The data come from the RNA Mapping Database (RMDB), library TTRDEL. Structure probing data (DMS and 2A3) for a 177-nucleotide construct. DMS adducts were read by reverse transcription with MarathonRT. The RNA was probed in 150 mM KOAc, 10 mM MgCl2 and 150 mM bicine (pH 8.5) at 24 C. Reactivities are given for positions 27 through 126. The DMS profile rests on 2,046 reads. DMS (dimethyl sulfate) methylates the pairing face of unpaired adenines and cytosines.
RNA sequence: GGGAACGACUCGAGUAGAGUCGAAAAGAUAUGGACAGUCUGCGCCCACUACCCACCUCGGAAACGAGAGGUGGGAACUACGCACGACUGUCCUAAGUCAAAACCGGGUCCGUUCGCGGACCCGGAACGUAAUUAGAUGCUUCGGCAUCUAAUUACGAAAAGAAACAACAACAACAAC
Reactivity to DMS in 0.01 (KOAc 150mM, MgCl2 10mM, bicine 150mM(pH8.5), 24C), signal-to-noise 2, nucleotides 027 to 126: g010a040u000a300u000g000g000a020c000a000g000u000c000u000g010c000g000c000c020c090a080c100u000a100c010c030c000a140c040c000u010c010g000g000a050a070a210c230g000a090g000a050g030g020u000g010g010g030a000a010c070u000a100c040g000c010a020c220g000a010c000u000g000u010c000c000u000a000a070g000u020c040a100a070a150a150c000c000g010g010g030u010c000c000g000u000u020c230g010c000g000g000a000c010c000c000g000g000a000a020
Reactivity to 2A3 in 0.01 (KOAc 150mM, MgCl2 10mM, bicine 150mM(pH8.5), 24C), signal-to-noise 3, nucleotides 027 to 126: g000a040u120a080u190g000g000a000c000a010g010u000c000u010g000c000g050c010c080c050a060c050u150a130c020c040c000a010c010c000u020c010g060g130a230a200a110c110g030a100g000a010g140g000u020g000g010g000a000a000c040u100a010c030g000c010a020c180g020a000c010u020g010u000c000c000u000a010a020g020u020c040a000a010a090a120c000c000g010g000g010u000c000c000g020u050u080c300g000c010g130g010a010c010c000c000g000g000a000a010